[RMDB]
RNA sequence: GGGAACGACUCGAGUAGAGUCGAAAACGCUCUGCCCUAUGUCGAUCGGGCGUCCGCGCUAAGCUCGGCGUCAAUAUGGACAUCCCGGGGGAGCUUGGGGUGGCCAGGUUGUCUAAGGAGGAACGAACCGGGCGAGGCCCGAAAGGGAGCAGCCAAAGUUAGAGCAGUUGUUCGCAACUGCUCUAACAAAAGAAACAACAACAACAAC
Reactivity to 2A3 in 0.01 (KOAc 150mM, MgCl2 10mM, bicine 150mM(pH8.5), 24C), signal-to-noise 1, nucleotides 027 to 156: c030g010c000u010c030u060g130c000c000c000u100a120u190g070u060c030g010a140u050c000g020g010g030c010g030u060c010c020g000c000g030c110u170a100a000g060c000u000c030g020g020c020g010u020c000a070a070u140a150u080g040g000a000c000a000u030c020c000c010g020g000g000g020g010a140g130c010u050u080g000g000g020g000u000g000g000c030c000a070g000g040u010u030g000u000c030u130a100a110g020g000a030g000g060a090a030c020g010a060a050c040c000g020g000g010c020g030a050g000g050c030c000c010g000a020a010a010g020g000g000a020g000c030a000g000c060c000a080a020a040
Structure probing data (2A3) for a 207-nucleotide construct. Conditions: 150 mM KOAc, 10 mM MgCl2 and 150 mM bicine (pH 8.5), 24 C. For 2A3 the reverse transcriptase was SuperScript II with manganese. Reactivities are given for positions 27 through 156. It was measured as part of the RMDB library ARCHII.